[RMDB]
RNA sequence: GGGAACGACUCGAGUAGAGUCGAAAAGCCCAGAAGCCUCCCCUCAAAAUCGUUUCAGUCCAAAGUUGAUUCGGCGGCCCUGUCAUGAGGCCGAAACGAAGGCACGUACCCCUUCGAAUGGCGUCGGAACUUUCAGUCGUAUUCGUACGACUGAAAAAGUCUAUUCACUGUUCGCAGUGAAUAGACUAAAAGAAACAACAACAACAAC
Reactivity to DMS in 0.01 (KOAc 150mM, MgCl2 10mM, bicine 150mM(pH8.5), 24C), signal-to-noise 1, nucleotides 027 to 156: g000c000c000c020a230g010a090a180g020c000c040u010c020c010c000c080u000c010a100a100a070a110u010c030g000u010u000u010c010a070g000u020c030c080a040a120a240g020u000u000g010a140u020u000c040g040g020c040g020g000c030c010c000u020g000u000c130a080u000g000a070g040g010c050c000g020a000a020a090c050g010a010a050g060g010c120a140c080g050u010a160c040c050c000c000u000u000c070g000a050a040u000g010g040c050g050u000c030g010g020a090a130c120u000u000u010c020a020g000u030c010g000u010a020u000u010c230g000u010a030c010g010a050c000u000g000a000a000a010a110
This 207-nucleotide RNA was probed chemically with DMS.
The reactions ran in a buffer of 150 mM KOAc, 10 mM MgCl2 and 150 mM bicine (pH 8.5), at 24 C.
DMS adducts were read by reverse transcription with MarathonRT.
For DMS, 2,046 sequencing reads were counted.